[RMDB]
RNA sequence: GGGAACGACUCGAGUAGAGUCGAAAAGAAAGAACAAAGCACCUCGAAGACCCGUUUACACGGGCCACUCGUCAGUCUCGAGUGAGGUGCAAAAACGAGACUGACAAAAAGAAAAAGAAAAAGAAAAAGUAGUGAUCAUCUUCGGAUGAUCACUACUAAAAGAAACAACAACAACAAC
Reactivity to 2A3 in 0.01 (KOAc 150mM, MgCl2 10mM, bicine 150mM(pH8.5), 24C), signal-to-noise 1, nucleotides 027 to 126: g010a000a140a000g010a050a000c060a040a110a000g020c000a000c000c000u000c000g030a070a040g130a260c000c000c000g000u010u160u110a300c210a000c030g000g000g000c000c000a000c000u080c130g060u100c000a000g000u010c000u000c000g080a080g100u300g000a000g000g000u000g040c000a010a000a010a010a010c000g000a000g000a000c000u000g000a000c000a000a040a000a020a000g260a010a080a000a000a000g210a020a110a000a010a000g160a000a080a090a000

The data come from the RNA Mapping Database (RMDB), library OK1LIB. Chemical mapping of a 177-nucleotide RNA with 2A3. For 2A3 the reverse transcriptase was SuperScript II with manganese. Values cover nucleotides 27 to 126.